[RMDB]
RNA sequence: GGGAACGACUCGAGUAGAGUCGAAAAUGCCGACCGCUUCUGCCAUCUCACCCCCCGUUCAUUUCCGCCAGCGCGGCGUGUUCCAUGAUGCGAAUGCCGGCGAACACGUCGGCGUGAUCGUCGGGCGCUUAAUAGUACUUUUCGAAGUACUAUUAAGAAAAGAAACAACAACAACAAC
Reactivity to 2A3 in 0.01 (KOAc 150mM, MgCl2 10mM, bicine 150mM(pH8.5), 24C), signal-to-noise 5, nucleotides 027 to 126: u060g020c000c010g020a040c010c000g030c000u040u020c020u060g030c010c010a090u040c040u040c040a100c000c000c000c010c000c010g010u030u040c020a050u050u060u020c020c010g000c010c010a020g010c030g000c010g040g000c010g010u020g000u000u000c020c000a050u130g030a070u130g050c030g060a170a060u230g030c020c010g050g030c070g020a030a010c040a000c020g030u040c040g090g020c000g000u000g010a030u050c030g060u020c000g010g000g010c040g010
Reactivity to DMS in 0.01 (KOAc 150mM, MgCl2 10mM, bicine 150mM(pH8.5), 24C), signal-to-noise 9, nucleotides 027 to 126: u010g010c020c010g010a100c060c050g010c040u000u000c040u000g010c030c030a060u010c020u010c060a300c030c010c010c000c010c010g000u010u010c090a100u000u010u000c040c020g010c070c040a170g010c050g020c030g010g010c040g010u000g010u000u000c010c020a140u010g010a120u010g020c020g010a110a080u010g020c010c030g010g010c090g010a030a030c050a020c010g020u000c040g020g030c010g020u000g000a070u010c060g010u000c030g010g010g010c220g010
Chemical mapping of a 177-nucleotide RNA with 2A3 and DMS.
The reactions ran in a buffer of 150 mM KOAc, 10 mM MgCl2 and 150 mM bicine (pH 8.5), at 24 C.